An RNA of 207 nucleotides, treated with 2A3 and read out base by base. For 2A3, 453 sequencing reads were counted.
[RMDB]
RNA sequence: GGGAACGACUCGAGUAGAGUCGAAAAGAAAGAAGGCGUAAUCGCCGUGUACGAGCUCCACGAUCAAUGAUUUUCUCGCCGCACGGCAUUGAUCGGACGUACCUCGGAUUGCCGCCUUACAAAGUUAAUACUAGAUUAAAUAAACCGUUGUGGCAAACACGUGAGCGUGAUUCGUCACGCUCACGUGAAAAGAAACAACAACAACAAC
Reactivity to 2A3 in 0.01 (KOAc 150mM, MgCl2 10mM, bicine 150mM(pH8.5), 24C), signal-to-noise 1, nucleotides 027 to 156: g100a010a180a000g140a000a010g000g000c010g000u050a000a060u060c090g080c160c000g000u040g000u010a000c000g030a090g000c120u150c180c070a080c030g000a000u000c000a000a000u020g100a130u120u020u240u070c140u120c080g030c070c000g120c010a030c120g000g030c010a000u000u010g000a000u000c010g010g050a020c000g000u020a010c000c050u130c060g000g000a000u000u050g070c100c060g000c010c010u040u030a070c020a010a110a000g010u050u090a000a030u120a160c110u100a040g120a200u150u180a160a110a080u090a100a040a000c040c010g020u070u080g000u000g010g000c040a000a020a000